[RMDB]
RNA sequence: GGGAACGACUCGAGUAGAGUCGAAAAGCAUCAACGAGAUUGGUUCCUACAGAUGCCAAUGCCACGAAGGAUAUGUAACAAAUGGCACCUACAGCUGCCUAGACAGAUCCUCGGUGUUCAUGUGUCAAAUGGUCACUGGAUUCGUCCAGUGACCAUUAAAAGAAACAACAACAACAAC
Reactivity to 2A3 in 0.01 (KOAc 150mM, MgCl2 10mM, bicine 150mM(pH8.5), 24C), signal-to-noise 2, nucleotides 027 to 126: g050c000a090u090c040a130a000c060g060a000g010a140u060u100g210g000u040u030c030c000u020a010c010a030g050a010u040g020c010c020a020a020u010g000c000c000a030c060g070a080a020g020g000a020u020a010u130g070u030a080a060c040a090a200a060u060g000g000c010a000c030c050u160a120c060a030g060c100u000g000c030c010u020a010g030a020c000a000g020a000u000c010c000u000c010g020g030u010g000u040u060c020a000u050g050u010g050u220c040a050
Reactivity to DMS in 0.01 (KOAc 150mM, MgCl2 10mM, bicine 150mM(pH8.5), 24C), signal-to-noise 3, nucleotides 027 to 126: g040c050a060u010c030a140a250c110g010a120g010a200u010u010g020g020u000u000c020c000u010a060c100a130g000a040u000g050c110c170a100a040u010g020c300c000a060c040g030a120a050g010g020a040u000a020u000g010u000a060a090c150a030a060a110u000g020g000c010a020c050c120u000a110c290a110g030c300u000g000c000c000u000a140g000a050c010a020g000a050u000c000c010u000c100g010g020u000g010u000u020c050a070u000g030u000g010u000c080a070